Structure probing data (2A3 and DMS) for a 177-nucleotide construct. For 2A3 the reverse transcriptase was SuperScript II with manganese. Values cover nucleotides 27 to 126.
[RMDB]
RNA sequence: GGGAACGACUCGAGUAGAGUCGAAAACUGUAAAUAGCAUGAUUCAAAUCAUCUUGUGCUGCAGCAGUUUCUUUGUAAUAUGCUUCAUAUAUUUCACGGUUUUUAAUUCUGAAUGCACCAGAUAAAUCAAAGUGCUUUAUUUCGAUAAAGCACUUUGAAAAGAAACAACAACAACAAC
Reactivity to 2A3 in 0.01 (KOAc 150mM, MgCl2 10mM, bicine 150mM(pH8.5), 24C), signal-to-noise 6, nucleotides 027 to 126: c010u010g030u100a020a070a150u120a050g050c050a030u070g040a090u170u110c080a080a060a160u080c040a040u000c010u020u040g020u030g020c040u060g020c030a030g000c010a010g010u010u070u010c020u030u040u060g050u040a040a040u040a040u110g040c020u060u090c100a050u090a030u030a060u190u060u040c060a020c040g040g050u010u030u020u050u140a110a090u060u030c020u020g110a200a050u050g010c010a020c020c010a000g020a060u080a050a080a020u000
Reactivity to DMS in 0.01 (KOAc 150mM, MgCl2 10mM, bicine 150mM(pH8.5), 24C), signal-to-noise 3, nucleotides 027 to 126: c020u010g000u000a010a040a120u010a020g020c050a020u000g000a040u000u020c080a070a120a130u010c210a020u000c030u000u000g010u000g000c020u000g000c210a140g010c100a060g000u010u000u000c020u020u020u010g010u010a010a060u020a050u000g010c050u000u000c100a080u010a070u090a020u000u000u000c080a010c060g000g000u000u040u000u000u020a080a210u010u020c040u000g000a110a040u010g000c060a070c040c020a040g000a030u010a050a080a080u010